[RMDB]
RNA sequence: GGGAACGACUCGAGUAGAGUCGAAAAGGACUUAGGUUCGCCUAAGUCCAAAUAACGUCUACAAGUACGGUAGACGUAGAUAACGUACAGUACAGAAGUACAAAAGGAGAGACUUCGGUCUCUCCAAGCCUAAAUUUCUGUUCGCAGAAAUUUAGGCAAAAGAAACAACAACAACAAC
Reactivity to DMS in 0.01 (KOAc 150mM, MgCl2 10mM, bicine 150mM(pH8.5), 24C), signal-to-noise 1, nucleotides 027 to 126: g000g040a020c010u000u000a030g000g000u000u000c160g000c030c000u030a000a010g000u000c000c000a060a080a080u020a120a020c000g000u000c000u000a030c020a040a100g030u000a030c300g000g000u000a030g010a000c000g040u000a000g010a120u020a080a120c200g000u020a110c210a110g000u000a050c080a150g000a090a130g030u000a060c070a030a150a110a080g000g000a000g000a030g010a010c000u000u030c170g050g010u000c000u000c000u000c000c020a000a000
Reactivity to 2A3 in 0.01 (KOAc 150mM, MgCl2 10mM, bicine 150mM(pH8.5), 24C), signal-to-noise 2, nucleotides 027 to 126: g000g000a000c000u000u000a030g000g010u050u070c190g040c030c000u010a010a000g000u000c000c000a000a000a000u000a000a000c000g000u030c000u000a000c040a100a090g140u070a070c080g070g000u000a020g020a000c000g030u000a020g020a060u110a070a030c060g040u030a050c080a100g090u010a030c080a120g170a220a020g090u030a020c040a030a130a040a030g010g000a000g000a000g010a020c030u050u060c300g030g020u000c000u000c000u000c010c000a000a000